[RMDB]
RNA sequence: GGGAACGACUCGAGUAGAGUCGAAAAGAUAUGGACCUGGGCAUCGAUCGUAUGUAACAAGUAUCGGAAACGAUACCGCCCAUACGGGAGUAGGGUCCUAAGUCAAACCUUGUGUUCGCACAAGGAACAAAAUUAAGAACUUCGGUUCUUAAUUUUGAAAAGAAACAACAACAACAAC
Reactivity to 2A3 in 0.01 (KOAc 150mM, MgCl2 10mM, bicine 150mM(pH8.5), 24C), signal-to-noise 3, nucleotides 027 to 126: g020a020u060a070u140g000g000a010c010c000u070g030g300g090c080a170u210c060g100a040u040c020g010u010a020u010g080u110a080a110c090a230a080g000u000a000u000c010g000g000a070a030a030c020g000a000u000a000c020c030g050c010c000c000a010u010a000c000g010g030g010a050g070u080a040g000g000g000u010c000c000u010a090a010g060u020c040a080a040a220c000c000u010u030g000u000g050u050u090c270g030c080a000c000a010a000g020g020a020a010
Reactivity to DMS in 0.01 (KOAc 150mM, MgCl2 10mM, bicine 150mM(pH8.5), 24C), signal-to-noise 4, nucleotides 027 to 126: g020a050u000a300u000g010g000a010c000c000u010g000g010g030c110a190u000c070g000a150u000c010g010u000a010u000g000u020a070a060c140a170a080g010u000a000u010c010g000g000a100a130a150c000g010a000u000a000c000c020g000c300c140c000a020u000a000c010g000g000g010a160g000u000a170g000g000g000u010c000c000u000a010a100g010u000c030a040a120a130c010c000u000u000g010u000g000u010u010c210g020c010a010c000a010a010g010g010a080a120
Notes:
An RNA of 177 nucleotides, treated with 2A3 and DMS and read out base by base. Conditions: 150 mM KOAc, 10 mM MgCl2 and 150 mM bicine (pH 8.5), 24 C. For DMS, 3,810 sequencing reads were counted. For 2A3 the reverse transcriptase was SuperScript II with manganese. It was measured as part of the RMDB library TTRDEL. For DMS the reverse transcriptase was MarathonRT.